[RMDB]
RNA sequence: GGGAACGACUCGAGUAGAGUCGAAAAACUUGCACUGAAAUUGAGGCUGACCCUGUAUUUUGAUUCUUAUUUGGCAACUUAUUUCUAUUCUGUUCCCAAUUCAAAAUCCCAAGGGGAGAAGGAAGAUAAUUGAUUACCAGAAGUAUGUAAUGGUGGACGUAUCAGUCAUCUUCGGAUGACUGAUACGAAAAGAAACAACAACAACAAC
Reactivity to DMS in 0.01 (KOAc 150mM, MgCl2 10mM, bicine 150mM(pH8.5), 24C), signal-to-noise 1, nucleotides 027 to 156: a120c040u010u000g000c000a100c050u010g010a070a090a190u000u000g020a080g000g000c040u010g000a080c060c040c000u010g000u020a030u020u000u010u000g000a100u000u010c010u000u010a140u020u000u000g010g020c020a080a070c030u010u010a070u000u000u000c040u020a070u000u010c010u000g000u000u000c010c010c020a100a190u040u020c080a110a060a090a100u000c030c020c000a090a190g030g010g020g060a040g020a060a100g010g020a040a070g000a070u000a000a090u000u010g000a120u000u000a050c010c020a090g020a040a080g060u000a030u000g070u000a050a080u000g030g010u010g010g020a200
Reactivity to 2A3 in 0.01 (KOAc 150mM, MgCl2 10mM, bicine 150mM(pH8.5), 24C), signal-to-noise 1, nucleotides 027 to 156: a020c020u080u160g030c020a030c160u110g040a070a110a100u040u120g020a050g010g030c050u010g010a050c020c000c020u040g060u070a120u060u040u080u050g090a120u170u000c020u020u070a080u090u100u020g020g000c000a030a020c030u100u030a090u130u220u000c020u020a140u050u020c040u020g030u030u010c020c000c000a000a020u090u010c000a010a010a040a080u000c000c060c000a110a150g030g010g050g010a010g050a010a010g020g010a000a050g040a090u070a010a060u060u110g060a030u160u060a010c010c010a010g020a060a000g020u110a050u130g050u060a060a150u040g070g000u020g000g000a010
Source information
This 207-nucleotide RNA was probed chemically with DMS and 2A3. For 2A3, 466 sequencing reads were counted. Conditions: 150 mM KOAc, 10 mM MgCl2 and 150 mM bicine (pH 8.5), 24 C. Values cover nucleotides 27 to 156. Source: RMDB library OK3TST, as collected in RNAgym.